[RMDB]
RNA sequence: GGGAACGACUCGAGUAGAGUCGAAAAUCAAAGAGGUCUGUAAAACUACUACUGGUAUACCUGAAUACAACUUUAUCAUCUACGACUCAUCAGAUCGUGGCCAGGAAAGUUUAGCUAGGUCUGCAUGCAAGGCGUAAGUUCGCUUACGCCAAAAGAAACAACAACAACAAC
Reactivity to DMS in 0.01 (KOAc 150mM, MgCl2 10mM, bicine 150mM(pH8.5), 24C), signal-to-noise 9, nucleotides 027 to 129: u070c000a120a080a080g030a060g030g030u020c050u060g000u010a030a030a050a050c000u010a060c050u020a140c100u050g040g020u040a080u040a020c100c050u030g000a110a080u050a030c190a080a060c080u020u020u030a060u060c080a060u030c060u040a040c000g030a000c050u020c060a110u040c120a090g020a010u020c030g000u030g000g010c090c000a020g040g030a070a040a050g030u010u010u020a080g030c050u030a060g040g010u020c040u040g020c070a070u030g030c150a040a050
Reactivity to 2A3 in 0.01 (KOAc 150mM, MgCl2 10mM, bicine 150mM(pH8.5), 24C), signal-to-noise 9, nucleotides 027 to 129: u110c030a040a010a010g080a020g020g030u020c020u060g060u100a030a040a030a050c030u080a030c020u010a010c020u040g020g020u050a060u060a120c010c020u050g050a060a030u150a090c060a060a050c070u110u170u130a150u120c060a040u030c010u040a030c020g030a020c020u030c070a140u040c020a100g020a050u020c010g060u050g010g000c010c020a010g040g000a060a050a020g010u040u070u060a030g010c020u010a010g000g020u010c010u000g020c010a040u070g030c030a040a100